[RMDB]
RNA sequence: GGGAACGACUCGAGUAGAGUCGAAAACAUGAGGGUUGGGUCCGAGGCGUCGACCAAAAUGAGCUAGCAAUCGGGUGGUGUUCUGGUCGCCCCGGCGCGAAAAUAUACAGAAUAGCGUUAUAGUAUCCCUGUUCCGACGGAAGCUAAAUCGCGAAAACAACUAAUUAGUGUUCGCACUAAUUAGUUGAAAAGAAACAACAACAACAAC
Reactivity to 2A3 in 0.01 (KOAc 150mM, MgCl2 10mM, bicine 150mM(pH8.5), 24C), signal-to-noise 3, nucleotides 027 to 156: c080a080u150g040a050g040g070g030u060u080g030g000g000u030c050c040g030a070g020g010c080g040u150c030g030a060c000c030a050a000a040a110u120g010a050g040c050u070a020g040c080a090a180u120c070g090g030g000u030g010g030u020g010u070u000c030u040g030g010u000c020g010c000c010c010c010g040g000c040g010c000g030a060a030a020a010u220a020u040a040c050a010g080a100a040u050a050g010c010g010u020u040a060u010a110g040u060a120u100c030c000c020u050g090u120u050c040c030g030a040c030g030g020a070a000g000c010u030a040a050a070u080c030g000c010g070a040a040a000a050
Reactivity to DMS in 0.01 (KOAc 150mM, MgCl2 10mM, bicine 150mM(pH8.5), 24C), signal-to-noise 2, nucleotides 027 to 156: c040a120u000g040a100g010g020g000u000u030g000g000g000u010c020c030g010a080g030g040c030g010u010c030g000a100c020c030a000a040a070a110u000g000a180g030c020u000a090g030c070a060a150u000c100g040g020g050u010g010g020u000g000u010u010c030u010g020g010u010c040g000c020c000c020c080g020g010c010g010c020g010a070a060a090a070u000a140u000a170c060a070g010a070a170u020a100g020c020g010u000u000a150u010a100g010u000a160u000c010c010c040u010g010u000u000c060c060g010a090c120g010g020a060a290g000c020u000a040a050a100u010c040g030c010g020a090a040a080a190

Source: RMDB library ARCHII, as collected in RNAgym. Structure probing data (2A3 and DMS) for a 207-nucleotide construct. 2A3 adducts were read by reverse transcription with SuperScript II with manganese. Values are in units of 0.01, from 0 to 300, in steps of 10. The RNA was probed in 150 mM KOAc, 10 mM MgCl2 and 150 mM bicine (pH 8.5) at 24 C. For 2A3, 2,927 sequencing reads were counted. In probing experiments dimethyl sulfate is read out at A N1 and C N3, which are open when not base-paired.